[RMDB]
RNA sequence: GGGAACGACUCGAGUAGAGUCGAAAAAGCUCCAGAGCCAGCCAAUCACUUAGCUCCUCAUAACAAGUCUAACUGGCUCUGGAAAGCUGAAAGGGCUGCACUGGAACAACACAGAUGAGAUAUUCUAAGUGUCUAUUUAGUUCGCUAAAUAGACACUAAAAGAAACAACAACAACAAC
Reactivity to 2A3 in 0.01 (KOAc 150mM, MgCl2 10mM, bicine 150mM(pH8.5), 24C), signal-to-noise 7, nucleotides 027 to 126: a000g020c010u010c000c000a000g000a000g000c000c000a000g030c000c030a050a090u120c020a040c070u050u050a030g030c010u070c090c020u100c060a110u140a250a060c070a090a010g010u010c020u030a010a010c000u000g000g000c000u000c000u000g000g000a000a020a000g000c000u010g000a070a030a000g040g010g010c020u030g020c040a010c030u050g010g040a100a040c020a040a010c030a040c010a060g050a070u120g030a060g020a060u110a130u100u040c020u040a050
Reactivity to DMS in 0.01 (KOAc 150mM, MgCl2 10mM, bicine 150mM(pH8.5), 24C), signal-to-noise 7, nucleotides 027 to 126: a030g010c030u000c010c000a010g000a010g010c010c000a000g000c080c060a150a220u030c260a050c030u010u010a100g010c060u010c060c090u020c160a070u050a100a090c150a040a030g000u010c080u020a200a300c010u000g000g010c000u000c000u000g010g010a000a010a040g010c000u010g000a050a100a110g000g000g000c000u000g000c040a040c010u000g000g010a090a060c100a050a050c080a050c090a040g010a050u010g010a080g000a140u010a080u000u010c030u000a070
This 177-nucleotide RNA was probed chemically with 2A3 and DMS. Values are in units of 0.01, from 0 to 300, in steps of 10. The data come from the RNA Mapping Database (RMDB), libraries RFM100 and RFMREP. Reactivities are given for positions 27 through 126.